RNA sequence: GGGAACGACUCGAGUAGAGUCGAAAACGGGAGUUUGCACCUCUCCCUGCCCGGGUGCUCGAGCUGCCGUUGCAAAGCCAACUUUGGAAAAAGUUUUUUGGGGGAGACUUGGGCCUUGAGGUGCCCAACCUCAAUGCCUAUUCGUAGGCAUUGAGGUAAAAGAAACAACAACAACAAC
Reactivity to 2A3 in 0.01 (KOAc 150mM, MgCl2 10mM, bicine 150mM(pH8.5), 24C), signal-to-noise 9, nucleotides 027 to 126: c030g010g020g000a030g010u030u080u100g050c010a010c000c000u010c010u010c000c000c010u020g020c000c010c020g010g030g010u140g030c020u020c030g060a050g010c020u120g080c030c020g110u140u100g060c060a070a050a020g040c030c050a020a020c040u050u040u090g080g010a070a050a030a030a060g050u040u030u020u030u100u070g100g010g000g010g000a020g010a030c000u010u020g000g000g000c000c020u070u200g060a040g000g020u030g000c000c000c000a020
Reactivity to DMS in 0.01 (KOAc 150mM, MgCl2 10mM, bicine 150mM(pH8.5), 24C), signal-to-noise 6, nucleotides 027 to 126: c170g000g010g000a030g000u010u000u010g010c030a020c030c020u010c010u010c010c000c010u010g010c020c010c030g010g000g010u020g010c010u010c040g010a050g000c010u000g000c030c030g010u020u020g010c060a050a060a070g020c150c150a040a030c010u000u000u000g010g040a080a110a020a020a020g000u000u010u030u000u010u020g000g000g010g000g000a070g010a110c040u000u010g000g000g000c010c070u020u020g000a050g010g020u010g000c010c100c120a090